[RMDB]
RNA sequence: GGGAACGACUCGAGUAGAGUCGAAAAGAACUUUCGAGUUCAGAAUUCCGUAGGCUUCUUGAGUCGCUCAUCGACGAAGUCUCGUUCGAAAGAGCGAGACAGAGAUGAGAACUACGAUGUAAGGAAGCCUAAACGGCCUCCCCAGGUUCGCCUGGAAGGGAAUCCGUAUAUUCGUAUACGGAUUCCCAAAAGAAACAACAACAACAAC
Reactivity to 2A3 in 0.01 (KOAc 150mM, MgCl2 10mM, bicine 150mM(pH8.5), 24C), signal-to-noise 2, nucleotides 027 to 156: g010a020a000c020u160u160u170c290g070a010g020u020u000c020a010g110a110a240u200u010c000c000g000u040a000g000g010c010u040u000c010u020u060g080a060g060u000c010g020c000u010c000a000u010c000g300a300c090g010a170a000g000u010c000u000c010g030u000u020c010g040a100a030a010g000a000g020c010g000a000g000a000c010a010g020a010g000a000u010g000a000g010a020a000c030u070a030c030g000a000u000g090u240a020a010g030g000a010a010g020c000c010u030a000a010a000c000g000g020c000c010u030c000c000c020c000a020g130g010u050u100c160g090c130c010u300g100g030a050a070